[RMDB]
Record summary:
An RNA of 177 nucleotides, treated with 2A3 and DMS and read out base by base. For DMS, 24,259 sequencing reads were counted. The RNA was probed in 150 mM KOAc, 10 mM MgCl2 and 150 mM bicine (pH 8.5) at 24 C.
RNA sequence: GGGAACGACUCGAGUAGAGUCGAAAAACCUGCGCUCGUCGUGGGACCGCCGCCUAUCCGCUCCUCGGCGCUGGUAUCUACCAGGUGCCUGUUAGCUUAAGUUUUGACGCCUGGGAGCGAAACCAUCUACCAUACAAAUAUUCGUAUUUGUAUGGUAAAAAGAAACAACAACAACAAC
Reactivity to 2A3 in 0.01 (KOAc 150mM, MgCl2 10mM, bicine 150mM(pH8.5), 24C), signal-to-noise 9, nucleotides 027 to 126: a000c010c000u010g010c030g010c020u130c120g250u050c010g010u070g000g010g020a030c010c020g060c020c010g040c000c020u090a130u100c060c010g000c000u010c000c000u010c010g000g000c000g000c030u020g010g010u020a060u040c030u070a170c030c080a040g020g000u020g030c000c010u060g060u110u140a040g000c030u110u140a190a050g080u130u070u170u170g080a040c000g000c000c010u010g010g010g010a010g000c010g010a020a000a000c020c000a040u030c020
Reactivity to DMS in 0.01 (KOAc 150mM, MgCl2 10mM, bicine 150mM(pH8.5), 24C), signal-to-noise 9, nucleotides 027 to 126: a100c020c000u000g010c050g010c030u010c130g010u010c040g030u000g000g010g010a110c060c030g010c080c060g010c040c040u000a100u010c090c020g010c020u000c010c010u000c300g010g010c010g010c030u000g000g010u000a040u010c110u000a110c130c090a070g000g010u000g010c030c020u000g010u000u010a090g010c090u000u010a110a150g010u000u000u010u000g010a130c020g010c010c000u000g000g000g000a030g020c020g000a030a040a100c100c080a070u010c120

Record summary
The data come from the RNA Mapping Database (RMDB), library OK2TRN. DMS adducts were read by reverse transcription with MarathonRT.